[RMDB]
This 177-nucleotide RNA was probed chemically with 2A3 and DMS.
Source: RMDB library OK1LIB, as collected in RNAgym.
The reactions ran in a buffer of 150 mM KOAc, 10 mM MgCl2 and 150 mM bicine (pH 8.5), at 24 C.
The 2A3 profile rests on 978 reads.
2A3 is a SHAPE reagent: it acylates the 2'-hydroxyl of flexible nucleotides of all four kinds.

RNA sequence: GGGAACGACUCGAGUAGAGUCGAAAAGAAGUGGCAGGGACAUGCCCCAAAAGCUCGUUCUAGCAACAUAUGUUUGGCUAGUUCGAGCGAUUAGUCUCGAGGAGCGUCCUCUCGCCUGUUGACGAGAAGUACCACCGAUGUUCGCAUCGGUGGUACUAAAAGAAACAACAACAACAAC
Reactivity to 2A3 in 0.01 (KOAc 150mM, MgCl2 10mM, bicine 150mM(pH8.5), 24C), signal-to-noise 2, nucleotides 027 to 126: g040a070a020g060u220g100g020c000a000g020g060g030a110c110a230u130g000c000c030c000c000a000a090a000a000g020c000u000c030g000u010u020c000u000a000g000c040a000a100c060a100u220a050u290g150u110u140u020g140g000c000u020a000g020u000u000c000g000a000g000c000g000a000u000u050a030g040u010c000u000c000g010a050g020g030a050g080c050g020u010c000c000u000c000u000c060g000c010c000u010g000u050u030g010a020c000g000a000g000a010
Reactivity to DMS in 0.01 (KOAc 150mM, MgCl2 10mM, bicine 150mM(pH8.5), 24C), signal-to-noise 1, nucleotides 027 to 126: g010a130a130g000u030g000g030c060a080g000g000g010a070c180a090u000g010c050c040c040c020a040a120a100a300g000c000u000c000g000u000u000c000u000a020g000c000a080a100c010a170u030a060u000g000u040u000u010g020g050c010u000a000g000u000u000c000g000a000g000c000g010a000u010u000a030g050u000c040u050c030g050a150g000g000a170g000c220g020u000c000c000u000c000u000c070g010c020c070u000g000u000u030g020a260c000g000a030g000a160